[RMDB]
Chemical mapping of a 177-nucleotide RNA with DMS. For DMS the reverse transcriptase was MarathonRT. The RNA was probed in 150 mM KOAc, 10 mM MgCl2 and 150 mM bicine (pH 8.5) at 24 C.
RNA sequence: GGGAACGACUCGAGUAGAGUCGAAAAGAUAUGGACGGUAUCCUGAACUACAGCAUUUACUUCGGAAACGAAGUAACCUCGGGCUGCAGGAGUACCGUCCUAAGUCAAACCAGCCUUCGGGCUGGAAGACUGAACGAGAGUUCGCUCUCGUUCAGUCAAAAGAAACAACAACAACAAC
Reactivity to DMS in 0.01 (KOAc 150mM, MgCl2 10mM, bicine 150mM(pH8.5), 24C), signal-to-noise 2, nucleotides 027 to 126: g020a030u010a300u010g000g000a020c020g010g050u000a040u000c000c000u050g000a120a080c070u000a300c020a020g010c010a130u010u000u000a010c000u020u000c000g010g020a170a150a120c000g020a020a020g000u000a000a010c300c100u000c210g010g010g040c010u000g000c110a040g000g000a050g070u000a030c000c000g010u000c000c000u000a010a030g000u020c050a090a190a300c000c060a000g000c000c000u000u020c190g000g000g020c010u010g000g000a010a110